[RMDB]
RNA sequence: GGGAACGACUCGAGUAGAGUCGAAAAAUAGCUGUAACGUCCGCUAUCAAGGUAGCUGUAACUUCCGCUAUUAAGAUAGCAGUUACAGCUAUCUUGAUAGCGGAAGUUACAGCUAUCUUGAUAGCGGGCCAUCCAGUAACUUCGGUUACUGGAUGGCAAAAGAAACAACAACAACAAC
Reactivity to DMS in 0.01 (KOAc 150mM, MgCl2 10mM, bicine 150mM(pH8.5), 24C), signal-to-noise 2, nucleotides 027 to 126: a110u020a110g010c040u010g020u020a040a090c110g000u020c020c010g000c000u000a010u000c000a000a010g010g020u000a000g020c010u010g010u010a000a010c000u000u000c030c020g000c000u000a000u000u030a000a000g010a020u000a010g030c020a040g020u010u040a110c280a120g000c000u000a000u000c000u000u000g000a000u000a020g000c010g000g020a000a000g000u000u000a000c000a010g030c000u000a000u000c000u000u000g000a010u000a010g000c020g030g010